[RMDB]
RNA sequence: GGGAACGACUCGAGUAGAGUCGAAAAUGCUGAACUUGAGAAAGGCAAUUUCUUUCCAUCAUUCUUGAGGGCUAUCUGCACCCAGCCAGUCCUUGAUGCAGUUCCUGGCCCCGAAAGGAAGCUGAUCAUACUAGCAUCUGUUCGCAGAUGCUAGUAUAAAAGAAACAACAACAACAAC
Reactivity to DMS in 0.01 (KOAc 150mM, MgCl2 10mM, bicine 150mM(pH8.5), 24C), signal-to-noise 5, nucleotides 027 to 126: u000g010c030u010g010a110a130c130u000u010g010a130g010a050a080a160g000g000c120a080a080u000u010u010c050u000u010u000c020c030a070u010c090a150u010u000c030u000u010g010a100g000g010g000c030u000a070u010c040u000g010c050a050c070c050c040a050g000c060c060a100g000u000c080c030u000u000g010a040u000g000c040a020g000u000u010c110c090u000g010g000c040c010c010c050g000a060a080a060g000g000a060a060g010c070u000g000a100u000c130
Reactivity to 2A3 in 0.01 (KOAc 150mM, MgCl2 10mM, bicine 150mM(pH8.5), 24C), signal-to-noise 3, nucleotides 027 to 126: u080g010c030u030g040a090a130c070u140u180g040a070g060a210a070a040g010g040c080a050a100u080u080u050c010u020u060u010c040c000a060u060c010a070u070u060c030u030u090g030a160g000g010g000c010u030a040u100c020u060g010c010a040c020c020c000a010g040c030c020a020g040u100c010c020u030u030g010a040u020g040c000a000g020u010u080c000c030u010g020g010c030c040c020c020g070a030a030a000g020g050a020a010g040c060u060g000a060u050c050
The record gives the reactivity of an RNA of 177 nucleotides to DMS and 2A3. The DMS profile rests on 5,537 reads. The data come from the RNA Mapping Database (RMDB), library OK2TRN. The reactions ran in a buffer of 150 mM KOAc, 10 mM MgCl2 and 150 mM bicine (pH 8.5), at 24 C. DMS adducts were read by reverse transcription with MarathonRT.